[RMDB]
RNA sequence: GGGAACGACUCGAGUAGAGUCGAAAAAGCUCGCGCUUCGGGGACCCGCAGCGACUGGCAAUUGUCGCGGCGUGUGGGCACAGUCCUGCGCAGGUCGCGUCAGCUCGUUGCUGAUACGAUGCGGGUCGGCCCUGCGGUCCUUCGGGACCGUAGGGCCAAAAGAAACAACAACAACAAC
Reactivity to 2A3 in 0.01 (KOAc 150mM, MgCl2 10mM, bicine 150mM(pH8.5), 24C), signal-to-noise 2, nucleotides 027 to 126: a000g060c000u000c030g050c000g030c070u090u090c030g000g020g070g000a000c000c000c010g020c000a010g020c010g070a090c050u180g020g000c070a130a170u190u100g020u010c010g000c000g000g000c030g010u030g020u000g020g030g030c050a060c120a300g090u210c000c000u040g010c050g020c020a110g070g120u020c000g000c000g000u000c000a020g010c110u100c070g050u010u030g000c030u020g010a010u010a190c040g030a010u100g010c000g050g010g000u000c000